[RMDB]
RNA sequence: GGGAACGACUCGAGUAGAGUCGAAAAUGAAAUAAACGGCACCUAUAAGCUGGUGCCGAACCAGCGUGACCUACCAACACGCAAGGAGCAGUCUGGUAUGACUGCAAAGGUAAGGUAAACAAAAAAAGUAUUAACAGAUCUUCGGAUCUGUUAAUACAAAAGAAACAACAACAACAAC
Reactivity to DMS in 0.01 (KOAc 150mM, MgCl2 10mM, bicine 150mM(pH8.5), 24C), signal-to-noise 1, nucleotides 027 to 126: u010g010a080a070a110u000a020a100a150c040g000g010c000a000c000c000u000a190u000a070a130g020c230u010g000g000u000g000c010c010g040a030a000c010c010a180g000c000g000u040g010a040c060c010u000a000c030c020a220a070c040a030c010g010c000a070a090g000g000a180g000c000a000g000u000c000u000g020g020u030a040u020g030a000c000u000g030c000a040a010a060g000g000u020a040a130g000g010u020a040a150a090c070a010a000a040a070a100a110a070
Reactivity to 2A3 in 0.01 (KOAc 150mM, MgCl2 10mM, bicine 150mM(pH8.5), 24C), signal-to-noise 2, nucleotides 027 to 126: u030g010a050a020a070u230a070a090a010c000g000g000c000a010c000c010u060a060u030a300a030g060c150u040g010g020u000g030c000c000g010a000a000c000c000a030g000c000g010u020g010a090c010c010u040a050c000c020a030a020c020a000c020g010c020a000a080g040g000a030g030c000a000g000u000c000u190g120g100u300a130u240g010a010c000u010g020c000a030a010a010g040g010u070a050a100g000g070u060a070a090a090c110a040a060a060a020a020a020a040
The data come from the RNA Mapping Database (RMDB), library M2PK90. This 177-nucleotide RNA was probed chemically with DMS and 2A3. For 2A3 the reverse transcriptase was SuperScript II with manganese. In probing experiments dimethyl sulfate is read out at A N1 and C N3, which are open when not base-paired.